[RMDB]
An RNA of 177 nucleotides, treated with DMS and 2A3 and read out base by base. Source: RMDB library M2PK50, as collected in RNAgym. Reactivities are given for positions 27 through 126. Conditions: 150 mM KOAc, 10 mM MgCl2 and 150 mM bicine (pH 8.5), 24 C. For DMS, 5,439 sequencing reads were counted.
RNA sequence: GGGAACGACUCGAGUAGAGUCGAAAAACCUCCACCUUCGGGUGGAGGUCGUGCGUUGCUGCGUUAAAUUAAUAGCUACGCUUAAUAAAUUUAUUUAACGCAUAAAACUGUGUUUCGACACAGUUAAAGAGCAAAUAAAAUUCGUUUUAUUUGCUCUAAAAGAAACAACAACAACAAC
Reactivity to DMS in 0.01 (KOAc 150mM, MgCl2 10mM, bicine 150mM(pH8.5), 24C), signal-to-noise 4, nucleotides 027 to 126: a030c000c000u010c000c000a010c000c000u000u020c240g030g020g050u010g000g010a000g000g000u000c030g010u000g010c100g010u000u010g010c090u010g000c010g010u000u000a000a010a020u000u010a050a060u000a070g010c040u000a090c220g010c040u000u000a060a100u010a090a110a130u000u000u000a030u000u000u000a010a010c000g000c000a100u000a050a050a040a020c010u000g010u000g000u000u000u000c160g000a050c000a010c000a000g010u000u010a030a070
Reactivity to 2A3 in 0.01 (KOAc 150mM, MgCl2 10mM, bicine 150mM(pH8.5), 24C), signal-to-noise 2, nucleotides 027 to 126: a000c000c010u000c010c000a020c010c020u080u090c270g150g000g000u000g000g010a000g000g000u020c010g030u030g030c030g050u060u120g100c060u030g000c010g010u020u010a020a040a000u010u100a030a120u020a080g020c040u090a030c110g000c010u090u070a150a040u140a130a160a040u070u080u040a010u000u030u000a030a010c020g000c030a020u120a060a190a000a000c000u000g010u000g000u020u150u080c130g010a000c000a010c000a020g000u030u020a070a050